Chemical mapping of a 207-nucleotide RNA with 2A3 and DMS. Conditions: 150 mM KOAc, 10 mM MgCl2 and 150 mM bicine (pH 8.5), 24 C.

RNA sequence: GGGAACGACUCGAGUAGAGUCGAAAAUGAAUAUCAAAGCCUUUUGAGACGCAGCGCCUUAACCUCCACCGCCGACCGCUGUCUAACACUAGUACAGAGCACCCAAUCGGUCCAGGGGCCAAAUAGCGCCGCUUGCGGCCUCUUUUGCUGCAUGUUCUAUUCCUAAAUCAUUCGUGAUUUAGGAAUAAAAAGAAACAACAACAACAAC
Reactivity to 2A3 in 0.01 (KOAc 150mM, MgCl2 10mM, bicine 150mM(pH8.5), 24C), signal-to-noise 2, nucleotides 027 to 156: u040g020a030a010u100a060u160c050a100a070a020g070c050c000u090u070u080u130g020a010g000a000c040g000c000a010g010c020g000c020c030u060u160a070a090c010c020u050c040c020a070c050c030g000c010c020g010a020c010c020g050c070u000g000u010c020u100a180a050c070a020c160u070a040g040u070a010c020a020g020a040g070c030a120c040c010c030a030a110u060c040g000g000u010c020c010a040g020g000g010g000c020c020a120a300a070u070a050g040c080g080c130c110g050c080u000u090g010c030g020g020c020c000u030c000u010u100u030u070g020c020u020g030c020a050u080g020u040u000c000
Reactivity to DMS in 0.01 (KOAc 150mM, MgCl2 10mM, bicine 150mM(pH8.5), 24C), signal-to-noise 1, nucleotides 027 to 156: u000g020a100a110u000a110u010c050a050a110a180g020c020c010u000u000u000u010g000a080g010a090c030g030c050a070g010c040g020c020c070u000u010a070a070c040c000u000c030c000a040c020c050g010c010c030g000a070c100c020g000c010u020g030u000c030u000a060a080c080a150c130u030a080g040u000a100c050a080g000a110g010c060a050c050c020c040a060a130u000c040g010g010u000c010c080a050g020g010g090g020c000c020a030a100a150u000a050g000c030g000c100c090g020c060u000u000g010c200g030g030c000c020u000c020u000u010u000u000g000c000u000g010c000a120u000g000u000u000c020